[RMDB]
RNA sequence: GGGAACGACUCGAGUAGAGUCGAAAACAGCUGUUAUCUUGCCACUGCAUUGUUAACACUCCAACAAAUAGAGUUGAAGUUUAAUCCACCUGCUCUACAAAGGGCUGGUGAAGCUGCUAACUUUUGUAAACCAACAGGUUCGCCUGUUGGAAAAGAAACAACAACAACAAC
Reactivity to 2A3 in 0.01 (KOAc 150mM, MgCl2 10mM, bicine 150mM(pH8.5), 24C), signal-to-noise 9, nucleotides 027 to 129: c010a010g000c050u030g000u050u040a050u070c030u020u070g020c020c070a190c140u170g010c020a040u020u120g030u070u030a020a010c020a010c050u020c010c010a040a020c030a030a190a080u270a060g050a000g010u010u040g030a040a020g000u020u060u210a060a080u040c030c000a000c010c010u020g000c000u010c000u050a110c110a060a170a120g000g000g000c000u020g010g000u000g010a000a000g000c000u030g010c020u030a040a050c020u040u060u050u070g120u110a050a050a060
Reactivity to DMS in 0.01 (KOAc 150mM, MgCl2 10mM, bicine 150mM(pH8.5), 24C), signal-to-noise 8, nucleotides 027 to 129: c000a030g190c100u020g010u020u010a050u050c050u010u030g020c020c180a020c150u000g030c030a060u020u050g040u030u000a030a050c050a070c060u040c030c070a010a090c120a010a100a120u080a060g020a090g060u030u010g020a030a020g040u000u000u000a080a110u010c150c000a010c050c020u020g050c080u040c000u040a090c300a090a100a070g000g020g020c010u030g000g000u050g030a030a000g000c030u040g020c020u000a040a060c040u000u010u010u010g030u000a060a070a160

Source information
This 170-nucleotide RNA was probed chemically with 2A3 and DMS. For DMS the reverse transcriptase was MarathonRT. In probing experiments dimethyl sulfate is read out at A N1 and C N3, which are open when not base-paired. The reactions ran in a buffer of 150 mM KOAc, 10 mM MgCl2 and 150 mM bicine (pH 8.5), at 24 C. The 2A3 profile rests on 21,002 reads.